This 207-nucleotide RNA was probed chemically with DMS and 2A3.
The DMS profile rests on 8,889 reads.
Conditions: 150 mM KOAc, 10 mM MgCl2 and 150 mM bicine (pH 8.5), 24 C.
RNA sequence: GGGAACGACUCGAGUAGAGUCGAAAAGUAGUGUGUUCGCACACUACAAAAAACCUUUGUGAUCCAGUAACGAUAAGCGUUAGGUGCCCAUUGGGCACUCAACGCUUUUGACGUUACUUGAUCACUCUGGUAAAAAACUUGUACUUCGGUACAAGAAUCCUUAUUACAGUUUCGACUGUAAUAAGGAAAAAGAAACAACAACAACAAC
Reactivity to DMS in 0.01 (KOAc 150mM, MgCl2 10mM, bicine 150mM(pH8.5), 24C), signal-to-noise 3, nucleotides 027 to 156: g020u000a010g030u000g020u000g020u000u000c300g050c040a020c000a020c000u000a000c000a000a020a070a110a080a030c010c010u000u000u010g010u010g000a010u000c000c060a040g010u000a000a010c000g010a210u000a030a010g000c000g010u000u000a030g020g010u000g020c000c000c030a300u010u020g050g040g020c010a010c010u000c000a010a010c000g020c000u000u000u000u020g020a210c100g010u000u000a010c010u000u000g000a020u000c000a000c010u000c020u000g000g020u010a000a060a070a090a110a060c010u000u000g000u000a000c000u000u000c300g070g020u000a010c000a010a000g000a120a090
Reactivity to 2A3 in 0.01 (KOAc 150mM, MgCl2 10mM, bicine 150mM(pH8.5), 24C), signal-to-noise 4, nucleotides 027 to 156: g000u000a000g000u010g010u000g030u030u070c190g130c070a000c000a000c020u030a010c040a000a000a010a000a000a010c010c000u020u000u010g000u000g010a000u000c010c020a010g000u000a000a000c010g030a060u010a040a010g000c010g000u010u030a050g010g000u010g010c020c020c090a270u270u300g020g000g010c000a000c010u020c000a000a000c000g000c000u010u000u010u010g010a000c000g000u000u010a000c020u010u010g000a000u000c000a000c000u000c000u000g000g000u100a160a030a020a070a020a040c000u010u010g000u010a000c010u040u050c300g140g000u000a000c000a000a000g020a030a080
The 2A3 profile rests on 4,436 reads.